Description
Conditions: 150 mM KOAc, 10 mM MgCl2 and 150 mM bicine (pH 8.5), 24 C. An RNA of 207 nucleotides, treated with DMS and 2A3 and read out base by base. The DMS profile rests on 5,834 reads. DMS adducts were read by reverse transcription with MarathonRT. Values are in units of 0.01, from 0 to 300, in steps of 10.
RNA sequence: GGGAACGACUCGAGUAGAGUCGAAAAUCGCUUUCUGGCUUCUGUAUUUUCCAUGCUUUCUGAGCUGUUUGUUGUUAAUCAGUACACCCUUCUACAUAACAAAUGGCUUCCAUUCUGAGGUGUCUGUUGUCAGUCAAGACUCCCUUCUGCAUGACAAGAUGGACUAUAGUUUCGACUAUAGUCCAUCAAAAGAAACAACAACAACAAC
Reactivity to DMS in 0.01 (KOAc 150mM, MgCl2 10mM, bicine 150mM(pH8.5), 24C), signal-to-noise 2, nucleotides 027 to 156: u020c050g020c040u000u000u000c000u000g030g000c020u000u010c080u010g020u020a030u000u000u020u000c020c020a120u000g000c030u000u000u000c080u000g010a100g020c010u010g010u020u000u000g020u000u010g020u010u000a070a080u000c090a100g000u000a090c060a100c040c030c020u000u000c050u000a080c080a090u000a050a090c050a010a080a070u000g010g010c010u000u000c040c000a130u000u000c050u010g010a090g030g030u000g000u000c040u000g020u000u000g000u000c010a070g010u000c070a050a100g010a090c050u000c020c000c000u000u000c020u010g000c070a130u000g000a060c090a070a200
Reactivity to 2A3 in 0.01 (KOAc 150mM, MgCl2 10mM, bicine 150mM(pH8.5), 24C), signal-to-noise 1, nucleotides 027 to 156: u070c030g000c060u080u070u080c040u040g020g000c010u040u000c000u070g120u070a130u060u070u050u060c010c000a010u040g090c020u090u070u080c070u220g030a010g000c020u040g050u060u070u000g000u000u000g000u000u020a090a100u100c050a030g080u100a040c020a090c090c070c000u150u000c030u080a090c020a140u100a040a070c020a020a050a090u080g000g000c000u200u020c060c000a080u010u120c020u120g030a010g000g010u010g000u030c010u030g040u030u000g010u010c030a000g000u030c020a070a010g000a030c020u030c000c030c000u090u100c000u070g050c020a050u070g160a020c000a010a060